Source: RMDB library OK3TST, as collected in RNAgym. An RNA of 207 nucleotides, treated with DMS and 2A3 and read out base by base. Conditions: 150 mM KOAc, 10 mM MgCl2 and 150 mM bicine (pH 8.5), 24 C. For DMS the reverse transcriptase was MarathonRT. Reactivities are given for positions 27 through 156.

[RMDB]
RNA sequence: GGGAACGACUCGAGUAGAGUCGAAAAUGCAAGGGAGAUGCAAGAUCCUACAGAUAUCACUGUAGGCAGGACCCAGCAGGGAGUCAACAUGAGCUGCUUUUUGCUAACUCAGAACACUCAGAAUGGAGAAAAGGUAGAGGCCUAAACUUAAUAUAUAGCUAUUUAGGUCAUUCGUGACCUAAAUAGCAAAAGAAACAACAACAACAAC
Reactivity to DMS in 0.01 (KOAc 150mM, MgCl2 10mM, bicine 150mM(pH8.5), 24C), signal-to-noise 1, nucleotides 027 to 156: u020g020c000a040a080g020g030g000a140g000a050u000g020c090a120a180g000a090u000c010c000u010a020c000a020g000a230u000a110u020c240a110c040u020g000u000a000g010g060c080a100g040g020a180c030c020c010a160g010c060a080g040g000g030a080g010u010c050a060a050c080a230u000g010a030g010c050u020g000c000u000u000u000u000u000g000c040u000a080a100c020u000c020a100g000a140a150c060a030c050u000c080a090g020a080a070u000g020g010a110g020a050a040a080a070g020g050u000a050g020a080g010g000c080c010u000a050a050a080c070u000u020a080a110u000a040u000a150u010a190
Reactivity to 2A3 in 0.01 (KOAc 150mM, MgCl2 10mM, bicine 150mM(pH8.5), 24C), signal-to-noise 2, nucleotides 027 to 156: u070g010c020a030a090g030g030g020a060g010a090u090g030c010a050a040g020a160u060c000c010u020a010c010a000g070a050u150a030u300c160a110c080u000g010u010a000g020g000c000a000g050g000a030c000c010c000a000g020c000a020g020g000g060a030g040u070c040a010a040c020a210u110g020a040g020c040u010g000c000u100u130u090u090u070g020c020u050a030a040c020u000c020a010g050a080a010c030a020c040u030c000a020g100a100a100u080g060g020a040g030a030a060a010a010g030g000u060a050g010a010g050g050c020c030u090a150a060a040c020u100u100a120a030u190a070u210a030u230a150